[RMDB]
RNA sequence: GGGAACGACUCGAGUAGAGUCGAAAAUUUUUAUUAGAUGUUUUGCACUUUGGGGUAUCCCCAGAUACUCGAUACAUACCAGAAAAUCCAACAUGUUCUAUAGCAUGAAGUGCAUGGUCUUCAGUAACUAGGAAUGUGAGUUCGCUCACAUUCCUAGAAAAGAAACAACAACAACAAC
Reactivity to DMS in 0.01 (KOAc 150mM, MgCl2 10mM, bicine 150mM(pH8.5), 24C), signal-to-noise 2, nucleotides 027 to 126: u020u020u030u050u080a090u030u040a070g000a070u000g000u010u010u000u000g000c020a070c030u000u000u000g040g000g010g020u010a030u000c030c010c060c050a140g050a040u020a060c000u000c040g000a190u000a040c090a090u000a010c090c090a160g000a030a010a050a100u010c120c180a080a220c080a020u010g010u020u030c150u050a090u030a110g020c050a010u000g000a000a010g010u000g000c010a020u000g030g000u010c040u010u000c050a040g000u020a090a130